[RMDB]
RNA sequence: GGGAACGACUCGAGUAGAGUCGAAAACUGUGGUAGACGCUUAGACCCGUGACGACAGACACCUAGACACGAGAGAGAAGGUAGAAUAAACAUAAACACAUAAAACAUGACACAUUAGCUGUAGUAACGUGCAUAGUGGUAACAACAUGGUCCAUCGUGAAUGGUGAGUAUUCGUACUCACCAUUCAAAAAGAAACAACAACAACAAC
Reactivity to 2A3 in 0.01 (KOAc 150mM, MgCl2 10mM, bicine 150mM(pH8.5), 24C), signal-to-noise 6, nucleotides 027 to 156: c030u050g020u060g070g010u060a020g030a090c030g020c060u060u050a030g050a110c020c010c030g040u060g040a030c040g030a010c010a030g030a030c010a020c040c030u040a020g020a040c040a020c140g070a080g000a000g000a010g020a070a040g000g020u050a040g050a060a090u130a050a070a010c030a040u140a070a120a010c100a000c030a060u140a090a070a040a000c050a070u100g030a070c020a000c010a090u080u080a020g030c040u040g010u040a030g030u030a070a030c050g010u020g000c010a000u040a060g030u020g020g000u030a060a020c040a020a010c010a050u040g000g030u030c040c000a080u110c080g000
Reactivity to DMS in 0.01 (KOAc 150mM, MgCl2 10mM, bicine 150mM(pH8.5), 24C), signal-to-noise 4, nucleotides 027 to 156: c030u000g020u000g020g020u000a070g010a120c060g050c040u000u000a110g000a100c030c010c050g020u000g020a120c050g010a100c060a100g020a140c040a100c050c040u000a120g000a120c050a130c050g000a110g000a120g010a100g000a080a040g050g010u000a050g000a060a080u000a070a070a130c050a140u000a090a050a090c050a070c030a110u010a060a030a080a090c040a080u000g010a070c030a050c020a080u000u000a090g020c050u000g010u000a130g010u010a050a030c020g020u000g030c030a110u000a080g010u000g010g020u010a090a080c040a040a040c040a040u010g020g000u000c030c030a100u000c070g010